[RMDB]
RNA sequence: GGGAACGACUCGAGUAGAGUCGAAAAUGAAUUUAUUUCAGAAAUUAUUCGUUUACUGAAUCAUAUAUGUAUUCACUGCGGAUUAUUGCGUUCACGAGAACCGUAUUCCGACGAUAUUAACCUAAAAGAGUUAUCGGGACACGCUCUUAGGAGAUUAGUUUUACACAACAUUCGUGUUGUGUAAAACAAAAGAAACAACAACAACAAC
Reactivity to DMS in 0.01 (KOAc 150mM, MgCl2 10mM, bicine 150mM(pH8.5), 24C), signal-to-noise 2, nucleotides 027 to 156: u000g000a060a060u010u010u010a070u040u000u000c000a120g010a200a100a100u000u000a050u000u010c020g000u020u000u020a110c040u000g000a040a030u010c020a140u000a160u010a100u000g010u010a040u000u000c010a030c010u000g000c060g000g030a050u000u000a030u000u000g020c030g060u010u000c010a050c150g000a150g010a010a070c040c060g070u000a190u010u010c010c000g000a020c040g010a080u010a130u000u000a070a190c070c070u010a060a080a070a190g010a120g010u000u000a070u000c010g010g000g000a080c020a020c030g020c000u000c000u000u000a060g040g010a130g020a080u000u000a160
Reactivity to 2A3 in 0.01 (KOAc 150mM, MgCl2 10mM, bicine 150mM(pH8.5), 24C), signal-to-noise 4, nucleotides 027 to 156: u030g000a010a030u080u180u190a050u030u200u130c060a080g080a070a070a050u110u070a040u080u080c040g020u040u090u120a090c040u030g000a020a000u040c050a010u120a060u120a050u300g040u090a040u030u030c020a010c100u030g000c020g000g000a010u030u040a010u020u230g050c080g020u020u030c060a080c160g100a120g000a170a020c030c020g000u020a040u040u000c010c000g000a020c010g020a030u010a060u120u120a060a050c000c020u060a110a110a040a010g070a000g030u060u050a070u130c060g010g000g050a020c020a010c070g000c000u000c000u030u020a050g030g050a100g020a050u050u070a010